Source information
Source: RMDB library M2RFPK, as collected in RNAgym. An RNA of 207 nucleotides, treated with DMS and 2A3 and read out base by base. The DMS profile rests on 4,061 reads. The RNA was probed in 150 mM KOAc, 10 mM MgCl2 and 150 mM bicine (pH 8.5) at 24 C.
RNA sequence: GGGAACGACUCGAGUAGAGUCGAAAAACAUAGGCCAUGCUUACGAGCAUGGCCUAUGACGAAUCUCAAGCAAUCAAGCAUUCUACUUCUAUUGCAACACUGAGGAGCUUACGAGCUCCGCAGUGAAAAAAGAGAGUAAUGUUCGCAUUACUCUCAAUCUAAAAUUGUAGUUCGCUACAAUUUUAGAAAAAGAAACAACAACAACAAC
Reactivity to DMS in 0.01 (KOAc 150mM, MgCl2 10mM, bicine 150mM(pH8.5), 24C), signal-to-noise 2, nucleotides 027 to 156: a120c020a000u010a020g010g020c000c010a000u000g010c010u000u010a060c250g040a120g030c010a010u000g000g040c000c000u000a000u000g010a120c050g000a070a060u000c040u010c030a080a140g010c050a060a110u010c140a070a100g000c040a140u000u000c050u000a050c020u010u000c060u000a110u010u000g030c010a090a220c010a010c000u000g030a010g000g000a020g050c000u000u010a110c220g000a080g030c000u000c010c000g010c030a010g030u000g000a000a030a090a130a100a150g010a020g020a030g020u000a000a000u000g010u000u010c300g010c030a010u000u000a000c000u000c010u010c000a000a040
Reactivity to 2A3 in 0.01 (KOAc 150mM, MgCl2 10mM, bicine 150mM(pH8.5), 24C), signal-to-noise 4, nucleotides 027 to 156: a000c000a000u000a000g000g020c000c000a010u010g010c000u130u090a080c230g120a020g010c000a000u010g000g010c000c000u000a000u000g000a000c000g040a030a060u000c000u010c050a030a030g000c010a030a030u090c010a040a040g020c040a140u180u050c050u140a090c030u050u050c040u100a050u020u050g000c020a100a030c000a040c010u000g000a040g020g010a000g000c000u080u050a050c170g080a020g000c000u000c000c000g000c000a000g000u010g020a100a020a000a000a000a020g010a000g000a000g000u000a000a000u020g010u030u080c170g000c070a000u000u000a000c000u000c000u000c000a000a010